[RMDB]
RNA sequence: GGGAACGACUCGAGUAGAGUCGAAAAAUCCUGGUCUUCUACUAUGAUCUUCUCUCUUCACCCCGUCGAGUGUGACGAGGAGUGUUCUGAAGUAGAGGCUUCAGAUUUAGAAGAAGGUGAAUCAGAGCGUUAAAACAAUGUUCGCAUUGUUUUAACGAAAAGAAACAACAACAACAAC
Reactivity to 2A3 in 0.01 (KOAc 150mM, MgCl2 10mM, bicine 150mM(pH8.5), 24C), signal-to-noise 6, nucleotides 027 to 126: a000u020c010c000u020g060g030u010c020u040u000c010u040a060c010u020a060u150g020a030u020c000u070u000c020u000c000u000c010u040u020c000a030c000c010c020c000g060u040c020g020a120g250u170g050u160g060a010c000g000a110g030g000a090g010u060g070u120u010c030u020g010a030a000g010u130a050g030a040g140g000c000u030u020c010a000g000a010u040u030u090a020g000a030a000g010a010a010g020g030u050g080a030a060u070c050a050g040a020g130
Reactivity to DMS in 0.01 (KOAc 150mM, MgCl2 10mM, bicine 150mM(pH8.5), 24C), signal-to-noise 6, nucleotides 027 to 126: a110u000c000c000u000g020g010u000c020u000u000c010u000a090c070u010a100u010g000a030u000c020u000u000c000u000c030u000c020u000u000c010a130c010c000c010c020g010u000c030g010a150g030u010g020u010g010a010c030g010a040g000g000a160g020u010g010u000u000c170u000g000a020a020g010u010a060g010a060g010g010c170u000u000c080a010g000a060u000u000u010a040g010a070a010g000a030a020g000g010u000g010a100a090u000c080a090g010a130g010
Source: RMDB library 15KREP, as collected in RNAgym. The record gives the reactivity of an RNA of 177 nucleotides to 2A3 and DMS. As a SHAPE reagent, 2A3 marks flexible, mostly unpaired nucleotides at the ribose 2'-OH. Reactivities are given for positions 27 through 126. The 2A3 profile rests on 9,355 reads.